[RMDB]
RNA sequence: GGGAACGACUCGAGUAGAGUCGAAAAUCACUGGACUUCGGUCCAGUGAAAAAGAAAGACGGACGGCGAACGUCAAACGCUGACGUACGUAAGUACGAAAAAAAAGUACGCCCUUCGGGGCGUACAACAUGGAUCAAAUGUUCGCAUUUGAUCCAUGAAAAGAAACAACAACAACAAC
Reactivity to 2A3 in 0.01 (KOAc 150mM, MgCl2 10mM, bicine 150mM(pH8.5), 24C), signal-to-noise 3, nucleotides 027 to 126: u020c010a000c000u000g000g000a000c010u010u040c270g050g000u010c000c000a010g000u000g000a000a000a000a010a010g060a020a030a000g100a020c030g030g000a010c020g030g020c030g020a090a020c010g050u040c030a070a130a030c150g020c080u050g020a000c000g000u030a010c020g030u050a100a140g010u010a020c040g140a140a000a020a000a000a000a000a010g000u000a000c000g000c000c000c030u000u040c150g030g000g000g010c000g010u010a000c000a000a000
Reactivity to DMS in 0.01 (KOAc 150mM, MgCl2 10mM, bicine 150mM(pH8.5), 24C), signal-to-noise 3, nucleotides 027 to 126: u010c000a000c010u000g000g020a010c000u000u020c190g030g010u000c000c000a000g000u010g000a000a060a050a110a120g020a120a110a090g000a170c000g000g010a060c030g010g000c010g000a040a030c020g000u000c080a030a060a120c200g000c100u010g010a170c010g020u000a020c000g000u010a090a110g030u000a010c010g020a000a000a000a060a070a060a080a080g010u000a010c010g020c010c000c000u000u000c140g030g000g000g030c000g000u000a000c000a030a080
Record summary:
The record gives the reactivity of an RNA of 177 nucleotides to 2A3 and DMS. Reactivities are given for positions 27 through 126. The RNA was probed in 150 mM KOAc, 10 mM MgCl2 and 150 mM bicine (pH 8.5) at 24 C. The DMS profile rests on 2,637 reads.